[RMDB]
RNA sequence: GGGAACGACUCGAGUAGAGUCGAAAACGGUUCCACGCUGGUCGCGGCGAAGAAGACGGGGCGUCGCUUCAUUGGCAUCGAGCUGGAUGACGAUUACUUCGUCACGGCCCAGCGGCGCAUCGAGGAGGUGCGGGAAUGAGCCGACUCAAGCAGCUCGCUGAUCUUGGCCUUUCGAGGCCAAGAUCAGAAAAGAAACAACAACAACAAC
Reactivity to 2A3 in 0.01 (KOAc 150mM, MgCl2 10mM, bicine 150mM(pH8.5), 24C), signal-to-noise 1, nucleotides 027 to 156: c000g040g000u040u010c030c000a080c100g000c020u000g040g020u000c000g080c090g030g020c000g020a020a030g010a080a030g210a030c050g010g000g020g030c000g050u050c020g000c000u100u020c040a110u070u210g040g000c000a030u070c080g030a050g020c000u020g020g050a050u090g010a000c000g010a000u010u200a090c020u030u020c010g000u000c000a010c070g010g040c020c100c000a000g000c000g000g010c010g050c000a000u020c030g040a020g150g130a060g030g000u110g000c150g010g000g040a070a060u180g000a000g050c030c010g020a020c000u000c180a030a130g000c090a000g000c020u000c050g000

This 207-nucleotide RNA was probed chemically with 2A3.
For 2A3, 747 sequencing reads were counted.
The RNA was probed in 150 mM KOAc, 10 mM MgCl2 and 150 mM bicine (pH 8.5) at 24 C.